[RMDB]
RNA sequence: GGGAACGACUCGAGUAGAGUCGAAAACAGACCAGGUGACCAUCUUUGGUAAGACAUAUGAUCUUGAUGAUCUGAAACCUACUCGGAUUGUCAGGAAUGGUCAUCCAACUGACCUCUGUGUCUUCACCACGCCACCAGGAUUCGUCCUGGUGGCGUGAAAAGAAACAACAACAACAAC
Reactivity to 2A3 in 0.01 (KOAc 150mM, MgCl2 10mM, bicine 150mM(pH8.5), 24C), signal-to-noise 1, nucleotides 027 to 126: c010a000g040a090c000c000a060g000g050u050g100a060c040c040a040u070c000u080u170u150g020g030u080a050a010g060a010c020a030u180a050u290g040a040u060c010u020u030g000a010u010g000a010u000c000u010g000a160a080a080c040c110u060a110c030u030c000g000g020a010u010u000g010u000c000a000g030g040a040a190u090g000g000u010c000a000u140c070c050a050a060c050u030g010a010c000c050u060c080u000g050u010g030u040c010u000u020c050a040c020
Reactivity to DMS in 0.01 (KOAc 150mM, MgCl2 10mM, bicine 150mM(pH8.5), 24C), signal-to-noise 1, nucleotides 027 to 126: c060a030g000a150c040c020a090g000g000u000g010a210c060c090a030u000c100u020u010u010g000g040u010a000a060g000a010c030a010u000a110u000g000a100u000c000u000u040g000a000u000g010a000u000c000u000g010a000a060a060c250c300u020a060c130u000c050g000g000a000u000u000g010u000c000a000g000g020a080a060u020g010g010u000c000a010u030c160c260a170a040c300u000g010a070c040c000u000c060u000g020u030g000u000c000u000u000c090a130c060
An RNA of 177 nucleotides, treated with 2A3 and DMS and read out base by base. 2A3 adducts were read by reverse transcription with SuperScript II with manganese. DMS adducts were read by reverse transcription with MarathonRT. Source: RMDB library OK2TST, as collected in RNAgym. High DMS reactivity at an A or C suggests that its Watson-Crick edge is free. The RNA was probed in 150 mM KOAc, 10 mM MgCl2 and 150 mM bicine (pH 8.5) at 24 C.